[RMDB]
RNA sequence: GGGAACGACUCGAGUAGAGUCGAAAAGAUAUGGAGCACGAUGAUCCCAUCAGAGUCGGUUCGGAAACGAACGACGACGAAGAUGGGUGAGUGCUCCUAAGUCAAAAGGGUAACUUCGGUUACCCAACCUCAUCAUACGGUUCGCCGUAUGAUGAGGAAAAGAAACAACAACAACAAC
Reactivity to DMS in 0.01 (KOAc 150mM, MgCl2 10mM, bicine 150mM(pH8.5), 24C), signal-to-noise 3, nucleotides 027 to 126: g010a020u000a300u010g000g010a010g010c000a020c000g000a190u010g010a100u000c010c010c000a020u020c030a050g010a300g000u000c000g000g000u010u000c000g000g010a130a120a160c000g010a000a020c000g000a190c030g030a010c000g010a300a230g000a010u010g010g000g010u000g000a030g000u000g010c000u000c000c000u000a000a070g000u000c040a040a020a100a150g000g000g010u010a000a030c000u000u000c250g020g000u000u000a000c000c000c000a010a000
This 177-nucleotide RNA was probed chemically with DMS. For DMS, 2,157 sequencing reads were counted. Values are in units of 0.01, from 0 to 300, in steps of 10.